[RMDB]
RNA sequence: GGGAACGACUCGAGUAGAGUCGAAAAAUGGCGUCCUCUUAGACGUCGUCUCACUGGUACAGACUUCGCAAGAACCGUUUGGUUGGGUGUAGUAGCAGACGACAUGCACUGGACCGGAUUGACUAGAGGAAGCGCCUGGAUUCGUCUGGGUGUUUCCAAAAGAAACAACAACAACAAC
Reactivity to DMS in 0.01 (KOAc 150mM, MgCl2 10mM, bicine 150mM(pH8.5), 24C), signal-to-noise 9, nucleotides 027 to 126: a100u010g010g000c010g000u000c000c110u000c200u010u010a090g010a030c030g020u000c010g010u000c010u000c040a160c070u000g010g010u000a040c050a040g010a090c080u000u000c070g010c080a070a090g000a060a060c070c040g010u000u010u000g020g010u000u000g010g010g020u000g010u000a050g010u000a090g020c080a040g010a090c080g010a060c080a080u000g010c030a260c010u000g000g010a040c020c020g000g000a110u000u010g000a110c060u000a050g010a300
Reactivity to 2A3 in 0.01 (KOAc 150mM, MgCl2 10mM, bicine 150mM(pH8.5), 24C), signal-to-noise 9, nucleotides 027 to 126: a000u080g010g000c010g010u010c010c030u140c110u060u200a030g000a010c010g010u010c010g030u000c010u010c020a060c030u050g000g020u030a030c010a030g040a100c050u040u000c030g000c030a030a090g020a120a050c020c010g050u060u150u210g080g000u050u060g100g030g050u110g020u060a110g040u030a030g040c020a010g020a080c050g030a020c010a050u060g000c010a010c020u020g000g010a010c010c000g010g010a060u080u140g040a060c030u020a020g000a010
This 177-nucleotide RNA was probed chemically with DMS and 2A3. In probing experiments dimethyl sulfate is read out at A N1 and C N3, which are open when not base-paired. 2A3 is a SHAPE reagent: it acylates the 2'-hydroxyl of flexible nucleotides of all four kinds. 2A3 adducts were read by reverse transcription with SuperScript II with manganese. The 2A3 profile rests on 33,983 reads. The reactions ran in a buffer of 150 mM KOAc, 10 mM MgCl2 and 150 mM bicine (pH 8.5), at 24 C. Values cover nucleotides 27 to 126.